[RMDB]
Notes: Chemical mapping of a 177-nucleotide RNA with DMS and 2A3. Source: RMDB library OK2TST, as collected in RNAgym.

RNA sequence: GGGAACGACUCGAGUAGAGUCGAAAACAAGAAGAAAGUGAUUGGUGUGGACGUCAACGCCCAUGCAGUUGAAACCAUUAAUCGCGGUGCUAUCCAUAUCGUGGAGCCGGAUUUAGAUAAAGUGGUGUACCUCUUGUGGGUUCGCCCACAAGAGGUAAAAAGAAACAACAACAACAAC
Reactivity to DMS in 0.01 (KOAc 150mM, MgCl2 10mM, bicine 150mM(pH8.5), 24C), signal-to-noise 2, nucleotides 027 to 126: c050a070a120g000a110a100g020a080a060a100g000u010g010a100u000u000g000g030u000g010u010g000g000a060c090g010u000c120a090a120c080g020c010c050c030a050u000g020c070a070g010u010u000g000a090a100a070c040c040a010u000u000a110a050u010c000g020c010g000g010u000g000c090u020a080u000c020c010a050u000a050u090c210g000u010g020g000a080g000c010c020g000g010a080u000u000u010a080g010a200u000a040a070a090g010u000g010g010u000g000
Reactivity to 2A3 in 0.01 (KOAc 150mM, MgCl2 10mM, bicine 150mM(pH8.5), 24C), signal-to-noise 2, nucleotides 027 to 126: c030a050a020g150a090a010g050a070a140a020g110u130g090a080u050u120g000g050u040g010u040g020g000a040c010g030u020c080a100a080c030g030c020c020c020a000u140g000c040a040g060u010u040g120a140a090a000c010c010a020u020u160a050a060u110c060g000c040g300g020u040g080c020u050a050u130c000c020a000u080a070u300c150g090u060g000g000a000g010c020c010g090g020a020u110u090u040a070g000a050u090a060a120a030g010u010g030g000u040g060
DMS adducts were read by reverse transcription with MarathonRT. The RNA was probed in 150 mM KOAc, 10 mM MgCl2 and 150 mM bicine (pH 8.5) at 24 C.